[RMDB]
RNA sequence: GGGAACGACUCGAGUAGAGUCGAAAACGACACAAACAUUACAGCUCCCAGACGUGAGUGAAGUGGUCUCAUCCAUGUCAGGGGGCACCAUGCCGGAUCUCACAACUCUAAAAUCCUUGCAAGUCGCAGAGGGAAGCUGGGAGGAUCUCACUCCAUACCACGUCCGGGGUUUCGACCCCGGACGUGGAAAAGAAACAACAACAACAAC
Reactivity to 2A3 in 0.01 (KOAc 150mM, MgCl2 10mM, bicine 150mM(pH8.5), 24C), signal-to-noise 1, nucleotides 027 to 156: c000g090a020c030a010c060a130a090a030c080a160u090u250a080c060a140g000c000u000c010c000c000a000g020a000c000g000u010g000a090g000u030g000a100a080g090u060g020g130u100c050u010c020a100u060c000c020a070u120g000u010c070a100g000g000g030g040g020c000a020c000c000a020u220g100c010c140g040g030a020u000c000u020c030a030c000a080a120c020u000c020u040a090a120a040a080u040c010c040u060u110g020c060a120a000g090u150c030g060c020a000g010a000g220g050g000a010a010g000c040u070g010g000g010a030g040g030a030u000c010u020c030a090c010u040c000c000a030u090a200

Conditions: 150 mM KOAc, 10 mM MgCl2 and 150 mM bicine (pH 8.5), 24 C. Structure probing data (2A3) for a 207-nucleotide construct. It was measured as part of the RMDB library OK3TST.